[RMDB]
Conditions: 150 mM KOAc, 10 mM MgCl2 and 150 mM bicine (pH 8.5), 24 C. This 177-nucleotide RNA was probed chemically with DMS and 2A3. In probing experiments dimethyl sulfate is read out at A N1 and C N3, which are open when not base-paired. DMS adducts were read by reverse transcription with MarathonRT.
RNA sequence: GGGAACGACUCGAGUAGAGUCGAAAACUUCAAAGUUGAGUCAUGUAUGGUAGUCAUGCAUCAUCAAGUUAGAACAUACCAGGCACUUGUACCGAGAUUUAAGCGUGACGGUGAACCGGCCGAAGCCUCUCUACCGAAAGUUCGCUUUCGGUAGAGAAAAAGAAACAACAACAACAAC
Reactivity to DMS in 0.01 (KOAc 150mM, MgCl2 10mM, bicine 150mM(pH8.5), 24C), signal-to-noise 3, nucleotides 027 to 126: c130u020u000c060a060a090a140g000u000u000g000a040g010u000c080a040u000g020u000a020u010g050g030u000a110g030u010c040a050u000g010c020a010u000c110a080u000c030a070a030g010u010u000a190g010a080a060c130a060u000a130c050c030a060g010g030c050a030c020u000u010g020u010a090c050c020g000a120g010a090u000u010u010a070a130g030c040g020u000g000a110c060g000g020u000g000a070a070c080c040g010g030c020c040g010a090a130g010c070c070
Reactivity to 2A3 in 0.01 (KOAc 150mM, MgCl2 10mM, bicine 150mM(pH8.5), 24C), signal-to-noise 2, nucleotides 027 to 126: c000u080u040c030a110a070a150g040u000u050g060a020g030u030c030a040u010g040u090a040u050g020g090u100a080g110u210c020a020u000g040c000a010u000c000a060u020c010a090a100g010u060u070a070g030a100a010c000a070u070a120c020c010a000g020g010c000a000c060u090u100g040u090a040c030c060g060a040g070a220u090u140u150a050a030g060c050g040u050g010a000c000g030g000u000g020a010a060c040c000g010g000c010c000g060a030a010g040c030c020
The data come from the RNA Mapping Database (RMDB), library OK2TRN.